Chemical mapping of a 207-nucleotide RNA with 2A3.
RNA sequence: GGGAACGACUCGAGUAGAGUCGAAAAUCGCCAACGAGUAUACGAUUACCAUUUUCUCCGAGGAUGGGUAUCCCUCCAACAAGAACUACGAGAUCACCAGCGGUCAGCUAUCCAUACUGAAGGCGGUAAACGAGCGUUUACUAUCAGCAUCGAUCCGCUCCUCCCGAAUAUUCGUAUUCGGGAGGAGAAAAGAAACAACAACAACAAC
Reactivity to 2A3 in 0.01 (KOAc 150mM, MgCl2 10mM, bicine 150mM(pH8.5), 24C), signal-to-noise 2, nucleotides 027 to 156: u030c000g040c030c010a100a060c150g060a020g060u060a050u060a150c040g020a030u000u150a040c010c030a010u020u030u000u030c230u000c040c190g040a010g010g000a030u040g020g000g030u050a070u060c010c030c010u070c130c030a070a090c040a080a070g060a090a010c010u070a040c140g110a060g020a150u030c020a010c040c000a050g060c000g020g000u050c010a020g020c010u030a060u060c030c020a070u040a090c020u100g020a060a030g080g020c040g000g000u020a000a030a030c020g020a050g090c030g070u030u010u070a060c060u040a070u090c040a000g040c020a020u020c020g040a040u020c010c010g010